[RMDB]
RNA sequence: GGGAACGACUCGAGUAGAGUCGAAAAGAUAUGGACCGAGGUACACAGCGAAGAACGAGUUCGGAAACGAACUCGGGAGCUGGUACUCGGUCCUAAGUCAAAACGGACGGCGUUCGCGCCGUCCGAAUCUUGACAUCAAGUUCGCUUGAUGUCAAGAAAAAGAAACAACAACAACAAC
Reactivity to DMS in 0.01 (KOAc 150mM, MgCl2 10mM, bicine 150mM(pH8.5), 24C), signal-to-noise 2, nucleotides 027 to 126: g000a010u020a300u000g000g010a000c020c000g010a000g000g010u010a030c000a210c040a020g000c000g000a100a200g000a150a170c010g010a010g010u000u000c000g000g010a150a160a280c010g000a000a000c000u000c000g000g000g010a050g030c000u000g000g000u010a020c000u000c000g010g010u000c000c000u000a010a040g000u010c070a070a040a140a240c030g010g010a050c000g030g030c000g070u000u010c290g000c010g010c000c000g000u000c000c000g010a020a040
Reactivity to 2A3 in 0.01 (KOAc 150mM, MgCl2 10mM, bicine 150mM(pH8.5), 24C), signal-to-noise 1, nucleotides 027 to 126: g030a000u070a020u080g000g000a000c010c010g000a070g080g240u120a010c300a000c050a100g000c000g290a300a040g030a060a010c000g010a000g000u010u000c000g000g000a080a040a010c040g010a010a020c000u000c030g000g000g010a020g000c020u050g000g050u000a000c000u000c010g000g000u000c000c000u010a010a000g000u040c000a000a000a020a020c030g010g000a010c030g020g000c030g040u120u130c300g000c020g000c230c000g000u000c000c000g000a000a000